The data come from the RNA Mapping Database (RMDB), library PDB130.
The record gives the reactivity of an RNA of 207 nucleotides to DMS and 2A3.
The RNA was probed in 150 mM KOAc, 10 mM MgCl2 and 150 mM bicine (pH 8.5) at 24 C.
For DMS, 10,085 sequencing reads were counted.
2A3 adducts were read by reverse transcription with SuperScript II with manganese.
DMS adducts were read by reverse transcription with MarathonRT.
For 2A3, 8,332 sequencing reads were counted.

RNA sequence: GGGAACGACUCGAGUAGAGUCGAAAAGCGGUAUUCUGACCGUGCAAAGGUAGCAUAAUCACUUGUUCUCCAAAUAAGGACUUGUAUGAAUGGCCACACGAGGGUUUUACUGUCUCUUACUUCCAAUCAGUGAAAUUAACCUUCCCGUGAAGAGGCGCAUUUAGUCUAUCUUCGGAUAGACUAAAUGAAAAGAAACAACAACAACAAC
Reactivity to DMS in 0.01 (KOAc 150mM, MgCl2 10mM, bicine 150mM(pH8.5), 24C), signal-to-noise 4, nucleotides 027 to 156: g020c020g010g020u000a060u010u000c060u020g000a060c030c000g070u000g010c080a060a100a100g020g010u000a070g010c030a070u000a100a130u010c040a040c030u010u010g010u010u000c010u010c010c030a080a070a160u010a070a030g010g010a020c020u010u010g010u000a070u000g000a110a090u000g020g010c010c030a160c050a070c050g000a140g000g020g000u010u000u000u000a040c030u000g020u000c020u000c050u000u010a050c050u010u000c030c050a070a140u000c050a060g020u010g000a040a020a100u000u010a050a070c040c010u000u000c010c000c010g030u010g010a060a090g000a050g040g000c040g000
Reactivity to 2A3 in 0.01 (KOAc 150mM, MgCl2 10mM, bicine 150mM(pH8.5), 24C), signal-to-noise 9, nucleotides 027 to 156: g030c040g000g010u050a100u110u110c060u110g080a030c000c010g000u030g020c060a060a060a050g050g020u080a050g070c040a060u080a090a070u120c020a020c040u020u040g010u050u020c050u030c060c060a060a090a130u160a060a070g020g010a010c010u050u060g030u070a070u090g070a090a020u070g030g000c020c010a030c000a000c040g020a090g020g020g020u000u020u040u070a040c030u030g030u030c010u000c000u090u080a130c040u110u050c040c030a040a090u070c010a030g010u020g080a050a090a150u090u050a040a050c010c000u020u020c020c010c010g020u020g010a030a020g030a030g020g010c030g000